RNA sequence: GGGAACGACUCGAGUAGAGUCGAAAAGCUGGUCGGUGACGACCAGCAACGAUCAGAGUGCUGAUCGAAACGUGCACAUAAAGGCGACGAUGGCACGAACAAGCGACGCACGUCGCCAAAGCCAGAGAGGGCAUAACAAACAUCACAAAGCGUCGCAGACGACAUGAAGCUUCGGCUUCAUGUCGUCAAAAGAAACAACAACAACAAC
Reactivity to 2A3 in 0.01 (KOAc 150mM, MgCl2 10mM, bicine 150mM(pH8.5), 24C), signal-to-noise 2, nucleotides 027 to 156: g010c000u000g000g020u000c000g000g050u080g030a090c020g000a010c010c000a000g000c000a000a000c000g000a000u000c000a000g130a070g110u210g180c030u000g000a020u000c000g000a040a030a000c040g010u000g080c000a010c020a250u170a060a150a050g010g000c000g000a000c000g050a030u000g050g000c000a000c030g000a010a010c040a050a070g010c000g020a000c000g000c000a020c000g000u000c000g040c010c010a010a010a010g010c010c010a030g010a010g000a090g150g060g120c070a030u190a080a000c010a000a140a030c060a090u190c080a040c070a130a100a000g010c000g000u000c000g000c000a000
The record gives the reactivity of an RNA of 207 nucleotides to 2A3. Reactivities are given for positions 27 through 156.